The record gives the reactivity of an RNA of 177 nucleotides to DMS and 2A3. The data come from the RNA Mapping Database (RMDB), library OK1LIB.

[RMDB]
RNA sequence: GGGAACGACUCGAGUAGAGUCGAAAACAAAAACGGAUUGUGUCAGUAAUCACAACAAACAAAAACAAAAGGAUUGUGUCCAUAAUCACAAAAACAAAACAAAAAGGAUUGUGUCCGUAAUCACAAAAUAAUAUGCUCCUUUCGAGGAGCAUAUUAUAAAAGAAACAACAACAACAAC
Reactivity to DMS in 0.01 (KOAc 150mM, MgCl2 10mM, bicine 150mM(pH8.5), 24C), signal-to-noise 3, nucleotides 027 to 126: c060a020a080a070a090a020c190g000g000a060u000u010g010u000g010u040c160a180g020u010a060a030u010c000a020c070a040a010c230a140a060a170c150a000a060a060a130a130c180a110a100a100a080g000g000a070u000u000g000u000g000u000c080c010a060u000a000a030u010c030a100c030a010a040a080a050a060c190a030a040a040a100c180a060a080a070a170a060g000g010a030u000u010g010u000g000u010c050c000g020u000a000a060u010c030a050c150a040a020a080
Reactivity to 2A3 in 0.01 (KOAc 150mM, MgCl2 10mM, bicine 150mM(pH8.5), 24C), signal-to-noise 4, nucleotides 027 to 126: c000a010a040a030a030a040c100g030g040a100u030u020g030u000g050u120c200a120g080u140a060a020u110c000a000c010a060a020c030a000a110a060c080a010a190a060a010a010c080a000a180a020a020g100g010a030u020u020g020u000g000u050c030c000a100u150a030a010u040c020a000c090a090a090a020a040a010c090a000a080a000a000c060a020a050a070a010a000g060g000a020u020u020g010u000g020u050c040c020g090u030a020a030u050c010a020c020a140a050a000
The RNA was probed in 150 mM KOAc, 10 mM MgCl2 and 150 mM bicine (pH 8.5) at 24 C.